The record gives the reactivity of an RNA of 177 nucleotides to 2A3 and DMS. For 2A3 the reverse transcriptase was SuperScript II with manganese. Source: RMDB library TTRDES, as collected in RNAgym. For 2A3, 17,771 sequencing reads were counted.

RNA sequence: GGGAACGACUCGAGUAGAGUCGAAAAGAUAUGGAAAUCAUGUUAGUGAUGACCGCAAUCGGAAACGAUUGCGCAAGCUGUCAGCAUGAGUUUCCUAAGUCAAAAGCGUUUACUUCGGUAAACGCAACGAUGUUCUAAUCUUCGGAUUAGAACAUCGAAAAGAAACAACAACAACAAC
Reactivity to 2A3 in 0.01 (KOAc 150mM, MgCl2 10mM, bicine 150mM(pH8.5), 24C), signal-to-noise 7, nucleotides 027 to 126: g000a000u020a010u050g000g000a010a000a010u020c010a010u000g050u120u240a300g090u210g300a300u250g020a040c020c000g000c000a000a010u020c000g010g010a010a020a010c010g000a000u000u030g000c010g000c000a170a300g030c060u180g270u300c070a000g000c000a000u010g030a090g190u000u030u000c000c000u000a030a000g000u000c020a030a050a140a100g010c000g000u020u010u000a010c020u020u110c300g090g000u010a000a000a010c000g000c000a000a000
Reactivity to DMS in 0.01 (KOAc 150mM, MgCl2 10mM, bicine 150mM(pH8.5), 24C), signal-to-noise 6, nucleotides 027 to 126: g010a010u010a170u010g010g000a020a020a060u000c000a000u000g000u000u000a130g050u010g020a090u010g010a190c300c010g000c000a000a000u000c000g020g010a050a040a050c000g000a010u000u000g000c000g000c140a050a110g010c090u000g010u010c110a100g000c000a000u000g000a050g010u010u000u000c010c000u000a020a140g010u010c020a080a110a130a160g010c000g000u000u000u000a000c000u000u010c220g020g010u000a000a010a010c000g010c010a030a030